[RMDB]
Background
An RNA of 207 nucleotides, treated with DMS and 2A3 and read out base by base. The DMS profile rests on 2,247 reads.

RNA sequence: GGGAACGACUCGAGUAGAGUCGAAAAACCACUGAGAACAAUGCCUUCUACAGUGUUUAUUCUCCUGUAGGAGCAAGUUCCUAAGGCAAGGAGGUUGCUCCCCUCAUGGAUGAAUAAAUUGACUUUGAUCCACAGCCCCACGUGUCAGCCUUGAGGGAUCUGGUACACAGUUCGCUGUGUACCAGAUAAAAGAAACAACAACAACAAC
Reactivity to DMS in 0.01 (KOAc 150mM, MgCl2 10mM, bicine 150mM(pH8.5), 24C), signal-to-noise 1, nucleotides 027 to 156: a120c060c010a070c070u000g000a150g000a060a050c030a110a070u010g020c050c030u000u000c010u000a070c030a080g000u010g000u020u000u000a100u010u000c000u000c020c000u000g000u000a040g020g000a020g010c010a030a200g000u000u000c010c000u000a090a120g010g010c190a190a070g000g010a110g030g010u000u000g010c000u000c000c010c030c090u010c060a080u000g020g000a050u000g010a040a020u000a000a040a100u010u000g010a030c040u000u000u010g000a110u010c050c030a060c040a070g010c050c000c010c020a080c040g020u000g000u000c040a100g000c040c050u000u020g020a100g010g010g020
Reactivity to 2A3 in 0.01 (KOAc 150mM, MgCl2 10mM, bicine 150mM(pH8.5), 24C), signal-to-noise 4, nucleotides 027 to 156: a000c020c010a010c050u060g030a040g000a090a050c080a170a240u210g050c010c020u020u030c010u110a140c020a020g010u000g020u070u070u010a070u060u020c020u010c000c000u040g020u130a040g010g020a000g040c000a010a070g240u000u000c040c000u080a130a110g200g060c080a080a020g020g010a020g050g020u020u020g000c000u020c000c020c010c020u050c020a060u180g000g020a050u120g010a080a030u060a050a060a050u080u060g040a040c040u130u070u170g050a080u090c030c020a050c020a070g010c000c010c000c010a050c030g020u030g040u030c020a020g020c010c000u080u110g030a130g010g020g000

For DMS the reverse transcriptase was MarathonRT.